This 207-nucleotide RNA was probed chemically with 2A3 and DMS. The data come from the RNA Mapping Database (RMDB), library M2RFPK. Reactivities are given for positions 27 through 156. The DMS profile rests on 1,469 reads. For 2A3, 1,251 sequencing reads were counted. Values are in units of 0.01, from 0 to 300, in steps of 10. For 2A3 the reverse transcriptase was SuperScript II with manganese.
RNA sequence: GGGAACGACUCGAGUAGAGUCGAAAAGUUAGGUGAGGCUCCUAUCCAAACACAGGCCACUGCCCAAAAAUGUCCAAAGACGCCAAUGGGUAGAACAGGGAUUGUCGGAUUAAGGCUUUCCAUAAUGAAAACAAAGUAUGCUUCGGCAUACUUUGAACCGUAUAGGAAACUUCGGUUUCCUAUACGGAAAAGAAACAACAACAACAAC
Reactivity to 2A3 in 0.01 (KOAc 150mM, MgCl2 10mM, bicine 150mM(pH8.5), 24C), signal-to-noise 2, nucleotides 027 to 156: g030u060u070a030g010g030u090g090a110g000g060c020u110c030c010u020a050u050c010c020a100a070a030c070a000c020a060g090g020c020c000a030c030u000g000c000c000c000a010a020a030a000a000u020g020u050c030c050a240a090a140g030a000c010g030c000c020a010a030u010g000g000g000u000a010g010a040a040c100a040g070g010g070a110u010u020g020u030c050g000g070a040u070u130a110a040g030g020c010u030u030u010c010c000a020u110a160a090u170g160a020a080a030a030c000a000a000a000g000u000a000u000g020c010u020u060c210g060g000c010a000u000a000c000u000u000u000g000a000a000
Reactivity to DMS in 0.01 (KOAc 150mM, MgCl2 10mM, bicine 150mM(pH8.5), 24C), signal-to-noise 1, nucleotides 027 to 156: g020u010u000a080g010g040u010g000a050g050g020c040u000c010c030u010a050u000c030c040a210a120a110c060a040c070a030g010g020c020c020a160c070u000g000c000c000c000a050a050a090a180a100u000g030u000c000c050a040a110a250g010a030c100g000c030c020a020a300u010g030g050g070u000a000g010a040a160c060a150g010g050g010a050u000u000g000u010c050g000g010a100u010u010a070a110g000g010c030u000u000u020c010c000a160u010a040a090u000g000a030a150a090a120c020a030a000a010g010u000a000u000g050c000u010u020c300g060g000c000a000u000a000c000u030u010u000g000a030a110